[RMDB]
RNA sequence: GGGAACGACUCGAGUAGAGUCGAAAAAGCUGCCUAAAUAGCCUCUUUCAGGUUCGAGCGUCUUCGGUUUGACUCCGUUAAGGACUGAAGACCAACCCCCAACGGAUGCUCUAGCAAGUGUUCUCUGGUUGGCUUGCUAGCUAAGAUUUAAUCAGAGCCUCUUAUAGGGGUUCGCCCCUAUAAGAGGAAAAGAAACAACAACAACAAC
Reactivity to 2A3 in 0.01 (KOAc 150mM, MgCl2 10mM, bicine 150mM(pH8.5), 24C), signal-to-noise 1, nucleotides 027 to 156: a000g060c070u080g010c020c000u130a250a240a180u190a130g060c040c030u130c090u110u220u110c080a010g010g010u020u180c130g130a040g040c060g010u000c010u030u000c010g020g030u000u010u080g010a010c010u000c010c000g000u010u010a020a000g010g000a010c000u000g010a000a000g010a010c010c010a000a060c000c020c000c000c010a000a000c000g010g000a010u010g010c000u000c000u000a000g000c000a010a000g000u000g020u000u000c000u010c000u010g000g030u000u000g000g020c000u010u000g000c000u000a000g000c000u000a000a000g060a060u210u250u300a030a000u060c000a000g000a000g020
Structure probing data (2A3) for a 207-nucleotide construct. The data come from the RNA Mapping Database (RMDB), library ARCHII. Conditions: 150 mM KOAc, 10 mM MgCl2 and 150 mM bicine (pH 8.5), 24 C.